[RMDB]
RNA sequence: GGGAACGACUCGAGUAGAGUCGAAAAAUGACAACCCUAACCCAGCUCUAUGUGGGUAAAGCCUCUCAUUAGCCGCGCGAACCUCUGCAACGGAAGAUCAUUCAUAGCAACAAUACAUUAGUUUCCACACGACCACACUUUUCGAAGUGUGGUCGUGAAAAGAAACAACAACAACAAC
Reactivity to 2A3 in 0.01 (KOAc 150mM, MgCl2 10mM, bicine 150mM(pH8.5), 24C), signal-to-noise 1, nucleotides 027 to 126: a040u150g040a010c050a000a120c000c000c000u000a000a000c000c000c000a060g070c020u070c030u130a100u230g010u000g020g000g000u000a140a030a040g040c000c000u080c030u000c000a020u050u010a030g000c000c000g000c000g030c000g070a040a040c010c010u030c000u000g000c030a030a030c020g000g080a030a010g000a030u040c080a030u110u000c010a050u070a140g110c000a000a090c030a140a070u060a120c030a120u120u000a070g050u000u000u010c000c000a030

Description: Source: RMDB library RFM100, as collected in RNAgym. Structure probing data (2A3) for a 177-nucleotide construct. For 2A3, 659 sequencing reads were counted. Reactivities are given for positions 27 through 126.